[RMDB]
The record gives the reactivity of an RNA of 177 nucleotides to DMS.
Source: RMDB library TTRDES, as collected in RNAgym.
The reactions ran in a buffer of 150 mM KOAc, 10 mM MgCl2 and 150 mM bicine (pH 8.5), at 24 C.
Values cover nucleotides 27 to 126.
RNA sequence: GGGAACGACUCGAGUAGAGUCGAAAAAGAUAUGGAAGGUCCUACCCACCAACCUGUUAGAGCUUGGAUUUACUCAUCGGAAACGAUGAGUUGUCAGCUCGAGAGGUUGAGGGACCUUCCUAAGUCACUCUCUCCAACACUUCGGUGUUGGAGAGAGAAAAGAAACAACAACAACAAC
Reactivity to DMS in 0.01 (KOAc 150mM, MgCl2 10mM, bicine 150mM(pH8.5), 24C), signal-to-noise 1, nucleotides 027 to 126: a090g000a140u020a220u020g020g030a050a010g010g030u000c000c010u020a190c000c010c040a300c050c000a000a000c000c000u040g060u000u000a130g010a000g010c000u000u040g010g010a000u010u020u000a000c000u000c000a000u000c000g030g010a150a090a140c010g020a010u010g070a000g010u000u000g020u000c000a030g020c000u000c000g000a160g030a000g000g000u000u000g000a070g030g010g010a010c030c000u000u000c000c010u000a010a050g000u010c190a160